[RMDB]
RNA sequence: GGGAACGACUCGAGUAGAGUCGAAAAGACGAACGAAAACACAAAUGUUCCACGGUGCAGAAGGGUCCCUCACAUGAGGAUCACCCAUGUAUCUCGGACAGGAUAUGCUUUUGGGAAAAAGAGAGAACUUAGUCAUUAUCUUCGGAUAAUGACUAAGAAAAGAAACAACAACAACAAC
Reactivity to 2A3 in 0.01 (KOAc 150mM, MgCl2 10mM, bicine 150mM(pH8.5), 24C), signal-to-noise 8, nucleotides 027 to 126: g080a020c070g030a110a020c020g020a030a010a040a010c080a010c020a030a100a090u060g020u170u030c020c010a010c060g010g010u010g000c010a020g030a300a150g070g000g000u020c020c020c000u010c010a250c040a210u300g000a010g020g010a050u140c030a020c000c000c010a000u020g000u000a010u000c020u020c050g010g000a000c000a010g030g000a060u070a020u220g020c030u020u040u050u050g040g010g040a020a100a020a090a010g110a010g020a020g020a050a010
Reactivity to DMS in 0.01 (KOAc 150mM, MgCl2 10mM, bicine 150mM(pH8.5), 24C), signal-to-noise 9, nucleotides 027 to 126: g010a140c100g010a120a150c040g010a020a010a040a030c040a030c050a030a220a140u000g000u010u010c000c060a080c170g010g020u000g010c010a020g010a090a110g030g000g000u000c140c010c010u000c020a160c230a120u020g010a010g000g000a030u000c180a030c010c000c000a080u000g000u000a010u000c010u000c300g000g010a010c020a020g000g010a140u010a060u000g000c020u000u000u000u010g000g010g010a060a060a040a060a080g000a100g010a100g000a080a150